RNA sequence: GGGAACGACUCGAGUAGAGUCGAAAAGAUAUGGAUCACUAUGCAAGGAACUGGUCGGAAACGACCAGAAUUCUGAUGACCAUACUGAUCCUAAGUCAAAACGACGAAAGCUUCGGCUUUCGUCGAAGGUAGGAUAUUUGUUCGCAAAUAUCCUACCAAAAGAAACAACAACAACAAC
Reactivity to 2A3 in 0.01 (KOAc 150mM, MgCl2 10mM, bicine 150mM(pH8.5), 24C), signal-to-noise 3, nucleotides 027 to 126: g010a010u020a010u050g000g000a010u000c010a010c030u010a010u020g010c050a130a290g000g010a000a020c010u010g010g000u000c010g020g000a000a010a000c010g000a000c020c030a010g010a020a030u110u000c000u010g180a300u030g010a000c000c010a000u010a020c060u010g000a000u000c000c000u000a000a000g000u000c000a020a020a090a170c030g010a000c000g000a010a000a000g000c020u110u180c300g200g000c000u020u070u000c000g000u000c000g000a020a000
Reactivity to DMS in 0.01 (KOAc 150mM, MgCl2 10mM, bicine 150mM(pH8.5), 24C), signal-to-noise 5, nucleotides 027 to 126: g000a030u000a010u020g000g000a030u000c000a010c180u000a020u000g000c020a060a030g000g010a020a070c010u000g010g010u010c000g020g000a010a010a020c010g020a020c000c000a000g000a040a090u010u000c000u000g010a080u020g010a020c300c000a000u000a010c150u000g000a000u000c000c000u000a000a090g000u010c010a050a060a110a290c010g010a000c000g000a000a010a010g020c000u000u010c280g050g010c010u000u000u000c010g010u000c000g010a020a030

An RNA of 177 nucleotides, treated with 2A3 and DMS and read out base by base. The RNA was probed in 150 mM KOAc, 10 mM MgCl2 and 150 mM bicine (pH 8.5) at 24 C. The DMS profile rests on 6,340 reads. Values are in units of 0.01, from 0 to 300, in steps of 10. Source: RMDB library TTRDES, as collected in RNAgym.